The data come from the RNA Mapping Database (RMDB), libraries RFM100 and RFMREP. This 177-nucleotide RNA was probed chemically with DMS and 2A3. Reactivities are given for positions 27 through 126. For DMS the reverse transcriptase was MarathonRT. Values are in units of 0.01, from 0 to 300, in steps of 10.

[RMDB]
RNA sequence: GGGAACGACUCGAGUAGAGUCGAAAAGCCGUUACUUCAAGCGGAUCCUGCCCAGGCCGCUGACCCUGAUCGAGGAUCCCAUGAGCCAGCUCAACCGCCUGAUGCAGUGGGAUAUGAACCAGAUCGAGUCAGUAGAAAAUUUCGAUUUUCUACUGACAAAAGAAACAACAACAACAAC
Reactivity to DMS in 0.01 (KOAc 150mM, MgCl2 10mM, bicine 150mM(pH8.5), 24C), signal-to-noise 9, nucleotides 027 to 126: g010c050c040g010u020u020a070c110u010u010c100a050a020g010c010g010g010a100u020c020c010u010g010c060c040c050a200g010g010c010c010g010c000u000g000a070c050c030c020u010g010a030u010c020g000a120g020g000a070u000c000c010c000a020u000g000a300g010c020c020a030g000c030u010c140a110a120c140c170g010c220c030u000g010a050u030g010c010a300g010u000g000g000g000a030u010a050u020g000a110a150c040c030a150g000a030u000c030g010a300
Reactivity to 2A3 in 0.01 (KOAc 150mM, MgCl2 10mM, bicine 150mM(pH8.5), 24C), signal-to-noise 9, nucleotides 027 to 126: g050c020c010g070u070u100a100c040u080u120c080a090a020g000c010g050g030a130u100c000c010u040g040c010c010c000a010g010g010c000c010g030c030u030g030a060c010c000c010u040g010a030u030c030g040a090g070g020a020u010c000c000c000a010u030g010a010g020c010c000a010g000c010u060c090a080a120c050c050g070c020c020u040g020a080u120g000c010a010g010u020g000g000g010a010u020a050u120g030a010a020c020c010a020g000a030u030c010g000a020